Background:
The record gives the reactivity of an RNA of 207 nucleotides to 2A3. The data come from the RNA Mapping Database (RMDB), library OK3TST. The 2A3 profile rests on 602 reads.
RNA sequence: GGGAACGACUCGAGUAGAGUCGAAAAUAGGAUUCAGUUUGGUGUUUUGCUCAUCUGGAUUCAUAAGUUAAUUGCCUGUGACUCAGACACCCACCAGUUGUGCUCCUUUGGCAAAUCACUUAAUUUCUCCAUGCCUUAGUUACCUCAUCUGUGAAAAGAGCAGUAGGUAGUUCGCUACCUACUGCUCAAAAGAAACAACAACAACAAC
Reactivity to 2A3 in 0.01 (KOAc 150mM, MgCl2 10mM, bicine 150mM(pH8.5), 24C), signal-to-noise 1, nucleotides 027 to 156: u130a040g010g010a010u010u000c020a020g070u040u090u100g120g050u150g130u070u070u190u270g100c080u090c000a030u000c000u010g000g020a050u040u070c100a020u070a100a070g010u010u070a090a090u120u050g020c000c000u030g020u050g060a020c000u000c100a030g030a130c010a040c060c010c010a050c000c000a020g030u030u000g000u080g040c010u020c010c010u070u040u070g000g000c040a040a060a080u130c010a050c000u010u050a070a050u150u100u030c050u000c070c060a070u040g040c020c000u040u070a050g030u050u110a090c030c040u060c000a090u080c040u140g130u190g050a060a250a000a020